RNA sequence: GGGAACGACUCGAGUAGAGUCGAAAAAGAUCUCCAAUUGUGGCACCACCAGGUGGCCACCACUCUUUGAAGUGAGGAGACUUGCUUUACGUGUUUGUUCAGCCCGAGCUUUCGCUCGCACUGGAACGUACGCGCUAAAGUUCGCUUUAGCGCGUACAAAAGAAACAACAACAACAAC
Reactivity to DMS in 0.01 (KOAc 150mM, MgCl2 10mM, bicine 150mM(pH8.5), 24C), signal-to-noise 1, nucleotides 027 to 126: a060g000a110u000c010u000c000c040a150a260u000u000g040u010g040g010c010a010c010c000a250c240c200a120g030g040u000g000g020c000c000a000c010c000a030c020u010c010u000u000u010g010a120a010g010u000g000a150g010g010a010g000a050c010u000u000g020c100u010u000u000a120c220g000u000g010u020u000u000g020u000u000c000a030g040c010c300c000g000a010g010c010u010u000u000c140g040c000u000c000g010c300a000c010u000g010g000a010a050c090